[RMDB]
RNA sequence: GGGAACGACUCGAGUAGAGUCGAAAAUCGAAGAAGGGGCUAGACGCUUGUGCGCUGGCUGGAGCGCGAGCCUGUGAGUAAUUGCUCCUCUGGAGAAGAAAACCAGCGUUGCUUCCCGCCUGAGCCUGUUUUUUUGUCCCGCUAGUCGAGCGGACAACUAGUUCUUACUCUUCGGAGUAAGAACUAGAAAAGAAACAACAACAACAAC
Reactivity to 2A3 in 0.01 (KOAc 150mM, MgCl2 10mM, bicine 150mM(pH8.5), 24C), signal-to-noise 2, nucleotides 027 to 156: u100c010g020a010a010g010a080a100g050g030g020g000c040u070a040g040a110c050g050c080u140u190g120u180g120c050g000c000u000g030g010c000u010g010g060a010g000c000g000c040g000a030g050c010c040u110g010u080g060a070g020u100a240a170u210u200g040c020u020c030c050u010c050u040g090g010a130g020a150a030g020a030a140a010a040c000c010a000g040c010g070u100u100g010c000u080u060c040c020c000g000c030c080u030g010a020g040c020c060u020g050u050u010u050u000u020u080u030g010u050c150c000c000g000c010u070a080g150u170c080g080a020g010c000g000g000a000c000a000a000